[RMDB]
The data come from the RNA Mapping Database (RMDB), library OK1LIB. The record gives the reactivity of an RNA of 177 nucleotides to 2A3 and DMS. The reactions ran in a buffer of 150 mM KOAc, 10 mM MgCl2 and 150 mM bicine (pH 8.5), at 24 C. DMS adducts were read by reverse transcription with MarathonRT.
RNA sequence: GGGAACGACUCGAGUAGAGUCGAAAAGAAUUUUAGAAAAGCAAGGCCGAAUAAGCAGCACCCGAAAUGCUGAGGGCUAAUUUGGGGUUUAGGAGCAACCUUUCCUGGAAAAAGUGGAAAGGAAAGACAUCCAUGCCAUGUUCGCAUGGCAUGGAUGAAAAGAAACAACAACAACAAC
Reactivity to 2A3 in 0.01 (KOAc 150mM, MgCl2 10mM, bicine 150mM(pH8.5), 24C), signal-to-noise 1, nucleotides 027 to 126: g040a100a110u080u140u130u230a240g050a050a030a000a000g010c040a240a050g000g000c020c020g090a100a080u130a200a000g020c030a000g040c000a090c000c000c000g050a050a080a080u080g050c000u010g000a160g000g000g000c010u210a060a090u040u070u000g100g000g000g000u040u010u100a080g130g000a050g000c030a000a000c000c000u000u000u000c000c000u000g040g060a180a000a000a070a040g140u090g010g020a020a000a000g000g000a090a000a000g000a000
Reactivity to DMS in 0.01 (KOAc 150mM, MgCl2 10mM, bicine 150mM(pH8.5), 24C), signal-to-noise 2, nucleotides 027 to 126: g010a160a140u010u020u020u070a050g030a090a240a070a120g000c120a030a000g000g000c020c050g030a040a170u050a060a090g000c040a030g000c110a100c030c010c070g010a010a170a020u070g000c030u020g000a170g030g010g040c070u020a000a000u010u000u010g010g000g000g000u000u000u040a030g000g000a050g000c070a070a060c020c020u000u000u010c000c010u060g050g020a090a050a110a130a050g050u050g030g000a030a000a000g000g010a090a030a030g010a300